The record gives the reactivity of an RNA of 177 nucleotides to DMS and 2A3. The DMS profile rests on 1,817 reads. Source: RMDB library OK1LIB, as collected in RNAgym. Reactivities are given for positions 27 through 126.
RNA sequence: GGGAACGACUCGAGUAGAGUCGAAAAGCUGGGCUCGGUGGCCGCCAGCGAAGACAUCUCCCAUGGUAGUGCCGGAGUUGUCGAUUAGCAGCUUGACUGGGCCCAUGCUGGCAGUCUUGCUGCGAAAGGGUUGGUUCUCCUUCGGGAGGACCAACCCAAAAGAAACAACAACAACAAC
Reactivity to DMS in 0.01 (KOAc 150mM, MgCl2 10mM, bicine 150mM(pH8.5), 24C), signal-to-noise 1, nucleotides 027 to 126: g000c040u000g030g040g000c040u060c040g000g010u020g020g030c030c050g100c020c090a070g010c020g010a130a140g000a020c000a010u000c030u000c000c000c070a170u010g000g040u030a070g050u000g060c080c190g010g000a090g010u000u000g010u000c030g030a150u090u010a160g000c000a020g000c040u000u010g000a030c010u000g000g000g000c000c000c000a060u050g010c030u000g000g050c030a000g010u000c060u030u010g010c000u030g020c000g000a050a170a080
Reactivity to 2A3 in 0.01 (KOAc 150mM, MgCl2 10mM, bicine 150mM(pH8.5), 24C), signal-to-noise 2, nucleotides 027 to 126: g010c000u060g000g000g010c020u020c100g030g010u080g060g000c010c050g010c000c000a030g040c070g020a050a060g040a010c020a050u040c010u000c000c000c000a050u070g030g000u050a200g050u020g100c000c020g000g000a040g000u010u010g010u000c050g010a060u000u030a010g000c000a000g000c000u060u150g090a020c010u040g010g080g000c000c000c020a010u070g010c040u030g020g000c000a010g000u000c060u160u180g030c000u000g000c010g080a090a020a090